Source: RMDB library OK1LIB, as collected in RNAgym. An RNA of 177 nucleotides, treated with DMS and 2A3 and read out base by base. The RNA was probed in 150 mM KOAc, 10 mM MgCl2 and 150 mM bicine (pH 8.5) at 24 C. For DMS, 19,658 sequencing reads were counted. 2A3 adducts were read by reverse transcription with SuperScript II with manganese. For 2A3, 15,891 sequencing reads were counted.
RNA sequence: GGGAACGACUCGAGUAGAGUCGAAAAGAGCGUCGAGAGACGAAGAGAAGUGCAUUGAUCCACAACGGAGAACGUAAUAAUGCACACAUGUGGCUUAGUGUCCGGAACAACGGGCACAAGAGGCAGACCAUAGUCAGGGAUUCGUCCCUGACUAUGGAAAAGAAACAACAACAACAAC
Reactivity to DMS in 0.01 (KOAc 150mM, MgCl2 10mM, bicine 150mM(pH8.5), 24C), signal-to-noise 8, nucleotides 027 to 126: g010a080g020c020g020u000c000g010a180g010a240g020a020c020g020a070a060g000a130g000a140a100g000u010g010c000a000u000u000g010a170u010c030c020a100c180a080a080c110g020g010a130g020a110a140c080g000u010a070a060u020a040a010u000g000c000a010c020a090c180a070u020g010u010g000g010c000u000u000a100g020u010g010u010c000c000g000g010a140a150c300a150a170c000g000g000g000c010a000c000a010a030g000a030g000g000c020a080g010a230
Reactivity to 2A3 in 0.01 (KOAc 150mM, MgCl2 10mM, bicine 150mM(pH8.5), 24C), signal-to-noise 9, nucleotides 027 to 126: g080a020g020c020g000u000c010g010a020g000a000g000a080c040g030a100a020g070a000g040a260a020g010u000g000c000a010u010u040g050a040u060c020c020a070c070a190a140c150g020g020a090g060a190a010c060g020u040a030a070u100a120a000u050g010c000a000c000a000c010a040u110g050u070g200g020c000u010u010a050g000u000g000u000c000c000g020g010a090a080c110a080a060c070g000g000g000c010a000c000a010a020g050a010g050g010c030a010g030a030